[RMDB]
Structure probing data (2A3 and DMS) for a 177-nucleotide construct. 2A3 adducts were read by reverse transcription with SuperScript II with manganese. The DMS profile rests on 1,057 reads. The reactions ran in a buffer of 150 mM KOAc, 10 mM MgCl2 and 150 mM bicine (pH 8.5), at 24 C. The data come from the RNA Mapping Database (RMDB), library M2PK90.
RNA sequence: GGGAACGACUCGAGUAGAGUCGAAAAGCAACGAGCGUAAUCGCGUCUUGACUAGGGAGACUGUAGGUGACGUGAGUAUCUAUCCCAGUGUGCAAAGCGCACAAUACGCUGAUCUACAGUCAAUUAAAACCGAGUUGUCAUUCGUGACAACUCGGUUAAAAGAAACAACAACAACAAC
Reactivity to 2A3 in 0.01 (KOAc 150mM, MgCl2 10mM, bicine 150mM(pH8.5), 24C), signal-to-noise 1, nucleotides 027 to 126: g120c020a040a070c080g100a010g000c030g040u100a040a050u090c010g000c040g000u000c000u060u220g060a060c020u030a040g000g140g000a160g000a010c000u000g000u010a000g000g040u010g010a010c020g000u000g020a000g060u070a080u170c040u050a070u030c030c000c000a030g030u030g020u000g010c080a250a230a120g110c030g010c030a000c000a000a000u070a020c000g020c000u030g000a020u020c000u040a000c000a000g020u020c030a000a040u210u150a040a100
Reactivity to DMS in 0.01 (KOAc 150mM, MgCl2 10mM, bicine 150mM(pH8.5), 24C), signal-to-noise 2, nucleotides 027 to 126: g010c010a060a060c040g010a100g020c040g010u000a030a110u010c020g050c020g000u000c030u050u010g000a170c110u000a180g000g000g000a170g010a000c010u020g000u000a010g010g020u030g000a040c020g010u000g010a060g000u000a100u030c220u010a110u000c040c010c000a170g000u000g000u000g000c000a100a080a190g030c070g010c000a010c000a040a030u000a100c000g020c020u000g030a060u000c000u000a000c010a020g000u000c000a080a150u020u020a030a080